Conditions: 150 mM KOAc, 10 mM MgCl2 and 150 mM bicine (pH 8.5), 24 C. The record gives the reactivity of an RNA of 177 nucleotides to 2A3.
RNA sequence: GGGAACGACUCGAGUAGAGUCGAAAACAUCACAGAUGAAUGGAUCAACAACAAGGUAGUCUAUCCAUCCAGUGGAAUAUGGUUUACCUUAAAAAGGAAGGAAUUCUGACACAUGCUACAGCAUGGAGGCCAACCCGGGAUUCGUCCCGGGUUGGCCAAAAGAAACAACAACAACAAC
Reactivity to 2A3 in 0.01 (KOAc 150mM, MgCl2 10mM, bicine 150mM(pH8.5), 24C), signal-to-noise 1, nucleotides 027 to 126: c000a040u000c000a000c000a000g000a020u000g020a030a030u040g000g000a000u300c060a000a060c000a000a000c000a300a300g260g100u080a000g200u000c000u000a000u000c000c000a000u040c090c090a000g000u000g040g000a000a300u300a000u100g010g000u000u060u140a140c000c000u100u050a150a220a000a000a000g260g000a090a010g000g160a000a120u160u000c000u000g240a000c120a000c000a000u180g080c000u300a300c020a000g000c000a000u000g000g000a000